[RMDB]
RNA sequence: GGGAACGACUCGAGUAGAGUCGAAAACGGUUUUUAGAGUCUAUGACUUGCACAACUACGUUGUAGAGAAAAUAGGCGAUAUCGCUCUAUAUAAGCGCGUGACGUACUUAUGCGAAUACGAUUCGCUCGGUGGGAGCGUGGAAACAAUCACAGUGAACUGAGAGUGUAGAUUCGUCUACACUCUCAGAAAAGAAACAACAACAACAAC
Reactivity to DMS in 0.01 (KOAc 150mM, MgCl2 10mM, bicine 150mM(pH8.5), 24C), signal-to-noise 3, nucleotides 027 to 156: c040g010g010u000u000u000u000u010a140g010a190g010u000c030u000a080u020g010a300c030u000u000g020c090a130c050a080a070c020u000a070c090g040u000u000g010u000a200g000a070g000a060a060a080a120u000a060g020g010c020g030a160u000a050u000c020g020c000u000c060u000a140u000a050u000a060a030g020c040g030c050g060u000g020a170c080g050u000a020c040u000u000a050u000g050c140g010a090a060u000a040c020g010a160u000u000c010g010c010u000c030g030g000u000g020g020g020a050g030c040g020u000g000g000a090a050a040c040a070a080u000c020a030c050a100g000u000g010a120a240
Reactivity to 2A3 in 0.01 (KOAc 150mM, MgCl2 10mM, bicine 150mM(pH8.5), 24C), signal-to-noise 3, nucleotides 027 to 156: c020g010g080u060u010u000u020u100a060g010a030g020u000c020u070a070u040g040a070c020u030u050g050c070a020c000a070a080c030u270a070c150g050u080u020g020u040a020g000a000g050a030a040a030a030u040a010g010g030c050g030a060u050a040u130c040g020c030u020c030u030a040u020a010u050a250a060g040c040g020c040g050u100g070a050c020g040u050a040c030u110u110a080u300g020c030g000a020a000u080a120c120g190a300u040u060c010g000c040u000c070g080g040u050g040g050g010a030g020c020g010u000g030g010a050a060a000c050a040a050u200c050a000c070a110g070u000g070a060a010